[RMDB]
The record gives the reactivity of an RNA of 207 nucleotides to 2A3 and DMS. 2A3 adducts were read by reverse transcription with SuperScript II with manganese. Reactivities are given for positions 27 through 156.
RNA sequence: GGGAACGACUCGAGUAGAGUCGAAAAAGAUGAGUUUUCAGAUACAAUAUCACUUCUGUCAGAGUCAUUUGAGAGGUUUAUGUCACCAGCUUCACAAGCCUAUAUGGCAAACAUGAUGUGGUGGGAUGAAGCAUUUGAUGGUAUAAGUUUGCCACAGGGUUAGUAGCAGAUUCGUCUGCUACUAACCAAAAGAAACAACAACAACAAC
Reactivity to 2A3 in 0.01 (KOAc 150mM, MgCl2 10mM, bicine 150mM(pH8.5), 24C), signal-to-noise 4, nucleotides 027 to 156: a000g070a070u070g040a050g070u080u050u080u130c040a030g030a070u100a110c050a150a100u070a060u180c050a050c090u070u020c010u070g050u060c040a000g010a020g130u040c060a110u020u090u140g100a120g010a030g010g050u060u090u110a030u060g090u050c020a000c020c010a070g060c030u030u050c010a030c010a090a060g000c000c000u210a210u070a080u300g010g010c000a060a040a000c050a070u080g010a020u060g030u030g030g000u010g010g000g000a020u050g060a040a010g030c030a040u100u130u090g080a090u040g020g020u070a040u010a170a070g010u010u040u060g040c050c000a030c030a060g020
Reactivity to DMS in 0.01 (KOAc 150mM, MgCl2 10mM, bicine 150mM(pH8.5), 24C), signal-to-noise 1, nucleotides 027 to 156: a080g010a080u000g000a120g010u000u020u010u000c000a050g010a110u000a080c050a040a110u000a100u000c030a050c060u010u000c020u030g050u010c040a130g000a180g000u000c010a080u000u000u000g000a090g010a060g000g020u000u000u000a050u000g010u010c060a080c040c030a100g030c010u010u000c050a060c060a100a300g000c020c010u000a090u000a100u030g030g000c010a030a050a070c080a050u000g000a080u010g000u000g040g030u000g010g020g000a040u010g020a030a040g020c050a140u010u020u000g040a050u000g000g050u030a060u000a060a110g000u000u000u000g020c000c000a090c050a160g050